[RMDB]
RNA sequence: GGGAACGACUCGAGUAGAGUCGAAAAUCCAUCAUGCCGUUCAAAAUUAUUGCUGCUGAUAACGGCGACGCAUGGGUCGAAGUUAAAGGCCAGAAAAUGGCACCGCCGCAGAUUUCUGCUGAAGUGCAACAGGGAAAAGGUUCGCCUUUUCCCUGUUAAAAGAAACAACAACAACAAC
Reactivity to DMS in 0.01 (KOAc 150mM, MgCl2 10mM, bicine 150mM(pH8.5), 24C), signal-to-noise 3, nucleotides 027 to 126: u010c010c000a110u020c060a050u000g010c030c030g020u000u000c100a090a120a130a110u020u000a050u000u000g000c110u000g020c040u000g000a210u000a030a070c000g020g030c220g000a010c040g020c070a040u010g010g000g020u000c020g010a050a050g020u000u000a030a050a280g000g000c060c040a120g000a050a070a090a080u000g000g010c010a020c010c090g020c250c270g000c040a030g000a300u010u010u010c020u000g020c010u000g010a210a090g010u010g000c070
Reactivity to 2A3 in 0.01 (KOAc 150mM, MgCl2 10mM, bicine 150mM(pH8.5), 24C), signal-to-noise 2, nucleotides 027 to 126: u030c040c010a010u020c010a010u150g070c050c000g010u060u110c060a100a130a060a140u160u100a090u090u210g040c090u020g020c010u090g050a040u050a150a000c030g040g020c000g000a010c000g010c030a090u140g010g110g020u050c030g020a020a010g010u010u080a130a020a010g010g020c030c000a040g100a080a150a020a040u130g020g000c000a000c000c020g000c020c000g010c030a000g090a240u140u300u080c000u000g000c040u090g020a030a020g020u030g060c000

Record summary
Source: RMDB library OK2TST, as collected in RNAgym. The record gives the reactivity of an RNA of 177 nucleotides to DMS and 2A3. 2A3 adducts were read by reverse transcription with SuperScript II with manganese. Conditions: 150 mM KOAc, 10 mM MgCl2 and 150 mM bicine (pH 8.5), 24 C. As a SHAPE reagent, 2A3 marks flexible, mostly unpaired nucleotides at the ribose 2'-OH.